[RMDB]
RNA sequence: GGGAACGACUCGAGUAGAGUCGAAAAGAUACCCUUCCAUAUCGAAGUAGACAUCCAAGGGACUGGGCAGGGGCAGCAGGGCUAAACCGCGUCGGGGAUGCUCUGGGUCUGGAGGAAUCAGACGGUAACUAGGAGUAUCGUUCGCGAUACUCCUAGUAAAAGAAACAACAACAACAAC
Reactivity to 2A3 in 0.01 (KOAc 150mM, MgCl2 10mM, bicine 150mM(pH8.5), 24C), signal-to-noise 1, nucleotides 027 to 126: g070a030u240a100c000c000c000u010u080c020c020a020u030a030u080c010g010a060a000g050u070a030g000a060c030a070u100c000c010a090a090g050g000g110a060c100u100g020g070g040c110a110g030g000g040g000c010a050g110c000a000g010g050g000c020u130a270a000a010c010c030g050c050g200u120c080g000g020g000g000a010u040g010c010u000c000u030g050g010g000u000c000u030g050g020a080g000g080a030a080u070c000a030g040a070c020g030g040u090a040
Reactivity to DMS in 0.01 (KOAc 150mM, MgCl2 10mM, bicine 150mM(pH8.5), 24C), signal-to-noise 2, nucleotides 027 to 126: g010a160u010a150c040c010c010u010u000c010c010a030u000a060u010c020g000a140a100g020u010a050g000a060c010a080u010c030c020a050a130g010g000g010a080c100u000g020g040g010c040a070g000g000g000g030c060a030g000c040a020g010g000g010c050u000a060a240a210c020c010g010c180g010u000c080g010g000g020g000a090u000g000c040u000c010u010g010g040g000u000c010u000g000g020a070g030g000a060a130u000c060a030g010a060c090g010g000u010a060